An RNA of 170 nucleotides, treated with DMS and 2A3 and read out base by base. For DMS, 4,163 sequencing reads were counted. For DMS the reverse transcriptase was MarathonRT. Conditions: 150 mM KOAc, 10 mM MgCl2 and 150 mM bicine (pH 8.5), 24 C. 2A3 adducts were read by reverse transcription with SuperScript II with manganese.
[RMDB]
RNA sequence: GGGAACGACUCGAGUAGAGUCGAAAAGAGGCGGAUCCUAAAGGCAAAUAUGCCCAGAAUCUGCUUAAGAAGUUGAUUGGCGGUGAUGUCACUCCAGUUGACCAAUACAUGUGUGGCGUUGAUGGAACAAGUAGCAGCUUCGGCUGCUACAAAAGAAACAACAACAACAAC
Reactivity to DMS in 0.01 (KOAc 150mM, MgCl2 10mM, bicine 150mM(pH8.5), 24C), signal-to-noise 2, nucleotides 027 to 129: g010a060g030g030c040g040g010a000u030c060c000u000a020a160a070g050g090c070a010a000a140u080a070u000g030c000c000c060a150g000a080a030u000c050u000g020c020u030u000a110a070g060a010a000g020u080u000g070a000u000u000g040g000c250g040g070u080g050a290u060g050u020c000a080c090u010c000c030a060g040u000u000g050a000c140c130a090a180u040a010c090a170u020g010u080g020u000g020g000c170g050u030u020g020a060u000g000g000a020a040c140a040a070
Reactivity to 2A3 in 0.01 (KOAc 150mM, MgCl2 10mM, bicine 150mM(pH8.5), 24C), signal-to-noise 2, nucleotides 027 to 129: g000a000g000g000c000g000g000a000u060c040c000u040a080a000a000g000g000c000a000a000a300u300a240u300g000c000c000c000a000g000a020a010u000c000u000g010c000u060u050a130a060g000a000a000g110u000u000g000a060u000u000g000g050c060g010g000u000g100a190u210g300u300c000a000c000u000c000c000a000g000u000u000g000a030c070c030a060a060u120a060c120a280u170g030u090g050u130g300g020c000g000u000u050g000a060u110g040g000a070a000c050a080a010